[RMDB]
Structure probing data (2A3) for a 207-nucleotide construct. Conditions: 150 mM KOAc, 10 mM MgCl2 and 150 mM bicine (pH 8.5), 24 C.
RNA sequence: GGGAACGACUCGAGUAGAGUCGAAAACAGUCUCCUUUCCCAGAGCCCUUGCCGUUGAGGAUCUAAGGAGUUCAGCACCAACCCUAAGUAGGGAACUAGAAGAUGAGUCAGACAGUGGGCAUGAGGUCACUGAUCAGUGGCUCUCAAGGAAUGUGUCGCAACAGCGAAAUUUCGAUUUCGCUGUUGCAAAAGAAACAACAACAACAAC
Reactivity to 2A3 in 0.01 (KOAc 150mM, MgCl2 10mM, bicine 150mM(pH8.5), 24C), signal-to-noise 1, nucleotides 027 to 156: c060a000g040u020c000u050c000c090u080u020u000c040c000c030a010g010a020g020c000c000c010u050u070g010c000c060g140u080u050g060a060g050g000a010u000c060u070a070a050g000g000a030g120u100u100c100a000g040c000a020c010c010a070a070c000c010c010u180a290a120g080u130a030g140g030g030a040a090c080u050a060g120a140a040g010a120u140g030a020g020u000c000a000g000a060c000a000g040u060g000g020g000c040a030u150g060a080g080g060u030c000a000c010u000g080a200u210c030a000g040u060g010g030c000u030c000u010c060a010a060g000g000a090a080u230g050u100g040u130c060